RNA sequence: GGGAACGACUCGAGUAGAGUCGAAAAAGAAAUAGCGUACUGUACACUCAGAAUGUACGCUAAGUAAGUGUGUGUUCUAUAACGUCCAAUUGAACAGACACACAGUUGGACCGAGUGUAAAAAAAAACCGUAUACAUAAGUUCGCUUAUGUAUACGGAAAAGAAACAACAACAACAAC
Reactivity to DMS in 0.01 (KOAc 150mM, MgCl2 10mM, bicine 150mM(pH8.5), 24C), signal-to-noise 6, nucleotides 027 to 126: a080g000a080a100a090u000a030g000c010g000u000a010c020u010g010u000a030c020a020c030u010c030a130g020a110a080u000g010u000a000c000g020c010u010a010a090g010u010a080a100g020u000g010u000g020u000g010u000u000c010u000a080u010a070a100c170g000u000c040c050a070a070u000u000g000a040a060c080a040g000a080c060a020c070a070c070a070g010u000u000g010g010a080c060c120g010a030g010u000g000u000a000a000a020a000a070a080a060a110a080
Reactivity to 2A3 in 0.01 (KOAc 150mM, MgCl2 10mM, bicine 150mM(pH8.5), 24C), signal-to-noise 6, nucleotides 027 to 126: a010g130a030a070a040u080a010g010c020g010u020a020c020u070g070u120a020c030a010c030u020c020a020g040a110a030u060g020u000a000c000g000c000u010a030a020g100u090a060a040g000u010g000u010g000u000g010u060u000c050u050a130u050a220a060c080g070u010c030c010a040a030u030u050g030a060a020c030a040g100a050c020a010c000a000c020a050g040u070u060g050g020a020c040c030g000a030g000u040g010u080a080a030a010a010a000a000a010a010a020

The data come from the RNA Mapping Database (RMDB), library M2PK90.
The record gives the reactivity of an RNA of 177 nucleotides to DMS and 2A3.
For DMS, 8,644 sequencing reads were counted.
For DMS the reverse transcriptase was MarathonRT.
For 2A3 the reverse transcriptase was SuperScript II with manganese.